Structure probing data (2A3 and DMS) for a 177-nucleotide construct. For DMS, 4,275 sequencing reads were counted. Conditions: 150 mM KOAc, 10 mM MgCl2 and 150 mM bicine (pH 8.5), 24 C. The 2A3 profile rests on 4,023 reads.

RNA sequence: GGGAACGACUCGAGUAGAGUCGAAAAAAGGAAAUUAAUACAUAAACGUGUACAAGUUAUAUUCUGUAACUUUUUUUUAUACACUAUCACGUACUUUAGUGUUCUUUAUCUUUCAUUACCUUAGUAGUCAAUGAAGAACAUUCGUGUUCUUCAUUGAAAAAGAAACAACAACAACAAC
Reactivity to 2A3 in 0.01 (KOAc 150mM, MgCl2 10mM, bicine 150mM(pH8.5), 24C), signal-to-noise 4, nucleotides 027 to 126: a000a000g060g010a050a030a010u060u020a040a020u070a040c010a020u170a060a170a020c010g000u000g040u040a050c020a050a010g000u020u010a030u020a030u190u150c110u150g030u020a040a050c010u160u120u050u010u000u000u080u140a170u090a050c020a020c030u130a110u160c030a020c020g030u080a050c060u080u100u080a050g010u020g010u030u000c000u020u050u040a220u030c000u010u050u010c030a050u030u110a090c020c030u060u040a080g100u010a020g030
Reactivity to DMS in 0.01 (KOAc 150mM, MgCl2 10mM, bicine 150mM(pH8.5), 24C), signal-to-noise 4, nucleotides 027 to 126: a030a020g010g000a040a040a020u000u000a020a020u000a040c020a110u010a060a080a050c040g010u000g010u000a050c160a040a020g000u000u010a020u010a100u010u020c210u010g010u010a040a040c010u000u000u000u020u010u000u010u030a110u020a100c070a070c090u000a080u010c070a030c050g010u000a050c180u000u000u000a080g010u000g000u000u000c040u000u000u000a060u020c030u000u010u010c060a110u000u000a090c030c030u000u000a070g030u010a100g010